[RMDB]
RNA sequence: GGGAACGACUCGAGUAGAGUCGAAAAAGCCUCACCGAUGCGUUAUCGUAAUCAAGGAUUGUCCAUGUCAUCAGAUGAACACGCGGACGAGUAUUCGCGUUAUAUCGUAGACGGGGCGGCGGUUGCUAGGCGUUUCAAUAUUCGUAUUGAAACGCCUAAAAGAAACAACAACAACAAC
Reactivity to DMS in 0.01 (KOAc 150mM, MgCl2 10mM, bicine 150mM(pH8.5), 24C), signal-to-noise 1, nucleotides 027 to 126: a260g010c040c000u000c170a060c070c070g020a090u020g050c070g040u000u000a080u010c030g000u010a000a000u000c030a050a080g000g030a200u000u000g000u010c020c170a110u000g000u020c050a200u000c160a140g030a200u000g000a000a000c300a000c070g000c000g000g000a040c010g000a130g000u060a100u010u000c090g000c070g020u040u060a150u060a040u040c000g040u040a250g000a040c040g030g000g000g070c070g000g000c130g010g000u000u000g000c100u000
Reactivity to 2A3 in 0.01 (KOAc 150mM, MgCl2 10mM, bicine 150mM(pH8.5), 24C), signal-to-noise 2, nucleotides 027 to 126: a000g000c000c000u020c010a050c020c000g010a010u080g020c000g020u060u100a060u110c050g020u060a220a020u050c040a030a090g060g020a150u020u150g020u060c000c000a020u180g020u020c000a030u030c050a140g000a060u090g040a040a050c040a000c050g010c000g010g020a000c040g100a070g080u160a200u000u060c030g000c010g000u010u050a170u000a020u120c000g000u020a080g000a020c010g000g000g000g010c030g010g020c070g010g000u020u040g020c050u010